[RMDB]
RNA sequence: GGGAACGACUCGAGUAGAGUCGAAAAGGGGUCUACGACAUGAGCCACGAGGCAGGCGAGGAUCUACACUGAAGCCUCCACGGUGUAGGGAGCCUGGCGACUGGCUCAACAGCGUAGACGGAGGCACCCAAAACUUCCUCGCUUCGGCGAGGAAGAACUACCGAUAUAUGUUCGCAUAUAUCGGUAGAAAAGAAACAACAACAACAAC
Reactivity to 2A3 in 0.01 (KOAc 150mM, MgCl2 10mM, bicine 150mM(pH8.5), 24C), signal-to-noise 2, nucleotides 027 to 156: g080g020g070g030u050c010u030a000c010g100a040c080a160u300g010a010g000c010c010a030c030g100a100g270g120c030a020g000g040c020g050a240g000g000a000u020c000u020a020c000a000c000u050g060a070a030g000c000c000u000c020c000a000c000g000g000u010g000u020a010g020g000g000a000g070c040c000u020g040g030c040g010a110c050u050g000g010c040u000c010a060a030c020a020g020c000g010u000a000g010a000c000g000g010a000g000g000c010a030c030c010c000a020a130a030a080c000u010u000c000c000u000c000g030c010u040u050c220g120g010c000g000a000g000g000a000a000g000a000a000